[RMDB]
RNA sequence: GGGAACGACUCGAGUAGAGUCGAAAAAUUACGUCAUUUUGGCUAUUUAGUAAGUUGGGGAUAUCAAAUGCAAUUUCCAAUAUUAAUUGCAUUGUUGAUGUAUAUAAUGUUUUUGAUGGGAUUAUCACGUUUUAAAAUGGUUCGCCAUUUUAAAACGAAAAGAAACAACAACAACAAC
Reactivity to 2A3 in 0.01 (KOAc 150mM, MgCl2 10mM, bicine 150mM(pH8.5), 24C), signal-to-noise 1, nucleotides 027 to 126: a000u040u060a020c000g000u010c010a060u050u120u120u140g050g000c000u070a050u040u080u000a110g060u040a100a170g000u050u090g090g000g020g000a010u020a010u170c040a040a000a070u060g000c040a010a010u010u000u050c010c000a050a060u190a050u300u110a060a020u040u050g000c000a040u000u070g120u100u020g010a040u060g000u010a040u010a000u010a140a180u100g060u060u030u000u080u030g020a020u020g000g180g000a080u000u190a040u250c050a000
Reactivity to DMS in 0.01 (KOAc 150mM, MgCl2 10mM, bicine 150mM(pH8.5), 24C), signal-to-noise 4, nucleotides 027 to 126: a060u010u000a040c050g030u010c010a060u000u000u000u010g020g000c020u000a050u010u000u010a070g010u000a050a090g010u000u000g020g010g010g000a070u000a070u000c090a060a050a050u010g010c050a020a020u000u000u000c140c110a060a090u010a090u000u010a020a010u000u000g000c000a000u000u000g000u000u010g010a020u000g010u010a040u020a090u000a080a080u000g000u000u010u000u000u000g010a060u000g000g000g010a120u000u010a060u000c080a160
Record summary: This 177-nucleotide RNA was probed chemically with 2A3 and DMS. The 2A3 profile rests on 551 reads.